[RMDB]
RNA sequence: GGGAACGACUCGAGUAGAGUCGAAAAGGUACAAUCGCGCUUAUCGAAGACGGGACACCAGUUUUAGCGCUUAUAACGCAAGAAUCUAUCAACUGGAAUAUUCGCGGAAAUGUCAACGAAGUAUUAGUCGGAUAAUGCGUUUCGACGCAUUAUCCGAAAAAGAAACAACAACAACAAC
Reactivity to 2A3 in 0.01 (KOAc 150mM, MgCl2 10mM, bicine 150mM(pH8.5), 24C), signal-to-noise 2, nucleotides 027 to 126: g200g040u160a170c000a000a150u060c020g010c010g000c020u010u300a030u030c060g030a110a050g070a060c210g060g000g000a000c070a000c000c000a000g010u020u030u030u030a000g000c000g050c000u030u090a230u210a060a030c070g000c080a190a000g070a150a140u020c010u190a050u100c090a010a010c070u070g000g160a020a000u260a260u080u190c090g000c060g110g020a120a150a080u200g000u000c080a000a150c030g020a020a000g000u040a070u080u010a100g100
Reactivity to DMS in 0.01 (KOAc 150mM, MgCl2 10mM, bicine 150mM(pH8.5), 24C), signal-to-noise 1, nucleotides 027 to 126: g000g020u080a000c150a010a110u000c060g040c070g000c020u000u000a040u000c050g030a180a010g000a090c030g000g100g030a140c080a260c020c000a000g000u000u010u000u000a120g000c130g000c010u000u110a020u010a120a230c000g000c040a090a130g000a070a170u000c020u000a040u100c120a000a140c020u000g000g000a240a040u000a030u000u020c000g000c080g040g000a090a060a030u000g000u000c100a030a110c140g000a010a000g000u070a060u000u040a000g000